Structure probing data (DMS and 2A3) for a 177-nucleotide construct. Source: RMDB libraries RFM100 and RFMREP, as collected in RNAgym. 2A3 adducts were read by reverse transcription with SuperScript II with manganese. The reactions ran in a buffer of 150 mM KOAc, 10 mM MgCl2 and 150 mM bicine (pH 8.5), at 24 C.
[RMDB]
RNA sequence: GGGAACGACUCGAGUAGAGUCGAAAACAAGGCUAUACCGACAGCGCACCUUCAAAAGGGCGCUUAAUCCCCGGCCAAGCGCCGAAAUAUGAAUAGACACCGCUGGGCUGGUAGGGCUUCCGAACGUAAAGCUCAUAGGAUUCGUCCUAUGAGCUUUAAAAGAAACAACAACAACAAC
Reactivity to DMS in 0.01 (KOAc 150mM, MgCl2 10mM, bicine 150mM(pH8.5), 24C), signal-to-noise 3, nucleotides 027 to 126: c200a090a060g010g000c020u020a130u020a070c040c020g010a110c180a010g030c000g030c050a120c020c050u000u000c290a100a100a150a050g020g000g000c030g010c000u000u030a020a090u010c010c010c000c020g010g010c030c030a100a020g000c020g020c060c040g000a040a040a040u000a110u040g000a110a040u020a080g010a130c220a080c230c020g010c030u010g010g020g040c010u000g010g000u000a030g010g010g000c010u000u010c020c030g000a090a100c170g010u030
Reactivity to 2A3 in 0.01 (KOAc 150mM, MgCl2 10mM, bicine 150mM(pH8.5), 24C), signal-to-noise 2, nucleotides 027 to 126: c050a040a040g030g000c020u060a020u080a180c040c020g040a060c070a070g000c010g000c050a300c050c010u030u060c010a080a120a080a040g030g000g000c000g000c000u020u000a000a010u010c000c000c000c040g050g020c010c030a120a060g010c030g020c100c000g010a070a080a030u220a030u100g170a070a060u070a140g170a020c010a000c030c000g060c010u030g010g040g000c000u020g000g060u040a100g000g010g010c000u150u030c020c060g030a100a080c010g070u070